[RMDB]
Conditions: 150 mM KOAc, 10 mM MgCl2 and 150 mM bicine (pH 8.5), 24 C. The record gives the reactivity of an RNA of 177 nucleotides to 2A3 and DMS. Values cover nucleotides 27 to 126.

RNA sequence: GGGAACGACUCGAGUAGAGUCGAAAAGCACGGCUGCUCCGGUGAGCCGUGCCAUGGAAUCGGGAGCUCCAAGUGGGCCAUUUUUGGUAAGCAGAACUGGCGAUGCGGGAUGAACCGGAAGCCGGGUAAAUCUUAAAGUAUUCGUACUUUAAGAUUUAAAAGAAACAACAACAACAAC
Reactivity to 2A3 in 0.01 (KOAc 150mM, MgCl2 10mM, bicine 150mM(pH8.5), 24C), signal-to-noise 9, nucleotides 027 to 126: g010c000a000c010g000g010c000u050g010c040u020c030c020g020g000u030g030a010g020c000c000g010u010g000c000c000a160u140g050g100a060a070u100c030g020g020g030a040g060c020u000c010c020a110a060g040u100g030g040g010c000c020a040u020u020u020u050u050g130g020u150a120a050g150c010a010g010a040a020c010u010g020g000c030g060a100u080g020c020g000g010g020a060u090g050a050a040c000c000g010g020a040a020g010c000c000g020g010g000u020
Reactivity to DMS in 0.01 (KOAc 150mM, MgCl2 10mM, bicine 150mM(pH8.5), 24C), signal-to-noise 9, nucleotides 027 to 126: g010c010a020c020g000g000c010u000g010c100u020c030c020g010g010u000g000a100g010c000c010g020u000g000c010c030a040u020g010g010a110a090u010c030g000g000g010a140g010c210u000c030c010a050a120g020u010g000g000g010c000c010a010u000u000u000u010u000g000g010u020a120a140g020c020a040g010a030a040c050u000g000g010c010g010a170u010g010c070g000g010g000a080u010g010a180a140c010c010g000g010a060a090g010c010c010g000g000g000u010

For DMS the reverse transcriptase was MarathonRT.